[RMDB]
RNA sequence: GGGAACGACUCGAGUAGAGUCGAAAAAGGACAUAACUAUGUGUUUUAAAGACGGUUUGAUUUAAUUUUUUAUUGAUAAUUGGAUUAGUAACUAGGCGAAUAGAUGAAAUGCAGAAAAAGAAAUGGUGUAUGAGACUUAAUUCGUUAAGUCUCAUACAAAAGAAACAACAACAACAAC
Reactivity to DMS in 0.01 (KOAc 150mM, MgCl2 10mM, bicine 150mM(pH8.5), 24C), signal-to-noise 3, nucleotides 027 to 126: a080g010g010a070c050a010u040a080a100c120u030a060u000g000u010g010u020u020u010u020a050a130a150g010a090c090g020g010u000u010u000g000a040u000u000u000a030a000u010u010u010u040u010u020a070u020u010g000a070u010a040a030u000u000g000g000a040u000u000a050g020u010a020a020c030u000a080g020g000c080g020a050a110u010a050g010a080u000g000a020a030a060u000g010c020a040g010a040a090a090a060a060g020a040a060a060u020g000g010u010
Reactivity to 2A3 in 0.01 (KOAc 150mM, MgCl2 10mM, bicine 150mM(pH8.5), 24C), signal-to-noise 5, nucleotides 027 to 126: a010g110g020a050c060a030u150a140a070c060u100a100u120g050u010g020u040u050u060u170a090a200a030g060a030c040g030g030u020u020u030g040a010u020u020u070a050a080u030u040u050u030u060u170a170u130u060g020a040u050a100a020u030u020g010g010a010u000u050a010g050u020a040a040c040u020a120g050g030c040g040a070a050u030a090g060a040u070g030a040a090a010u050g000c030a010g150a050a110a020a010a000g120a000a120a020u150g040g000u030